[RMDB]
RNA sequence: GGGAACGACUCGAGUAGAGUCGAAAAGAUAUGGAAUGUGGCCGUUGAUGACCUUGUAUUCCCCGACAGUAUAUCGGAAACGAUAUACUGUCGGAUCAUACAAGCAAGACGGCACAUUCCUAAGUCAGACUCACGUGUAGUUCGCUACACGUGAGUCAAAAGAAACAACAACAACAAC
Reactivity to DMS in 0.01 (KOAc 150mM, MgCl2 10mM, bicine 150mM(pH8.5), 24C), signal-to-noise 2, nucleotides 027 to 126: g000a000u030a300u010g000g010a010a000u030g010u000g030g050c010c000g010u000u000g000a170u000g000a070c300c030u010u030g020u000a000u000u000c220c110c010c030g000a010c020a000g050u000a020u000a030u000c000g010g000a130a090a170c000g000a020u000a010u020a000c000u000g000u000c000g000g010a000u000c300a010u000a010c010a010a000g000c030a130a080g000a000c000g000g000c000a010c000a000u000u010c010c000u000a000a080g010u000c010a140
Reactivity to 2A3 in 0.01 (KOAc 150mM, MgCl2 10mM, bicine 150mM(pH8.5), 24C), signal-to-noise 1, nucleotides 027 to 126: g070a010u070a020u200g000g100a000a000u020g070u090g300g300c030c010g030u010u030g090a300u120g000a050c040c020u000u090g040u050a030u070u110c110c030c000c000g000a000c040a000g020u000a020u000a000u030c030g050g050a050a000a100c030g000a000u000a000u070a020c000u000g000u010c000g000g000a000u010c000a000u010a000c000a000a010g080c000a110a120g000a000c000g030g000c010a000c000a000u000u000c000c000u020a000a000g030u020c040a020
Structure probing data (DMS and 2A3) for a 177-nucleotide construct. The DMS profile rests on 1,229 reads. The RNA was probed in 150 mM KOAc, 10 mM MgCl2 and 150 mM bicine (pH 8.5) at 24 C.